Structure probing data (DMS and 2A3) for a 177-nucleotide construct. For DMS the reverse transcriptase was MarathonRT. For 2A3 the reverse transcriptase was SuperScript II with manganese. Conditions: 150 mM KOAc, 10 mM MgCl2 and 150 mM bicine (pH 8.5), 24 C. For DMS, 1,151 sequencing reads were counted.
[RMDB]
RNA sequence: GGGAACGACUCGAGUAGAGUCGAAAACAAGGAUAAUGGUAUGUCCAAGGAUGAACAUGAGUUGGCAAAAACACUACACCGCCUUUCCAUAUCAUCAGUUCCAAGGAAUAACAAGUAUCGCCAACAACCUCAUUUAGCUGUUCGCAGCUAAAUGAGGAAAAGAAACAACAACAACAAC
Reactivity to DMS in 0.01 (KOAc 150mM, MgCl2 10mM, bicine 150mM(pH8.5), 24C), signal-to-noise 2, nucleotides 027 to 126: c090a090a090g020g010a010u000a050a050u000g010g010u000a020u000g010u010c010c010a030a280g010g000a080u010g000a130a100c100a040u000g000a110g010u020u000g010g030c100a050a110a070a030a090c150a010c110u000a040c150a030c110c080g000c020c000u000u000u040c070c020a020u000a120u000c050a040u030c110a080g000u000u020c010c040a010a140g000g000a150a050u000a050a080c170a040a100g000u010a040u000c140g020c020c010a060a030c080a070a110
Reactivity to 2A3 in 0.01 (KOAc 150mM, MgCl2 10mM, bicine 150mM(pH8.5), 24C), signal-to-noise 3, nucleotides 027 to 126: c020a000a050g080g020a000u050a120a060u150g070g030u080a050u070g160u000c000c010a020a030g070g010a110u110g040a060a020c020a050u080g050a040g100u020u010g050g000c050a000a050a090a090a010c080a050c070u140a030c080a030c040c040g010c030c000u030u040u060c030c000a020u010a040u090c060a020u030c030a040g120u030u020c000c010a020a010g060g030a090a090u120a080a040c010a000a080g060u050a040u090c040g000c070c000a020a010c030a010a030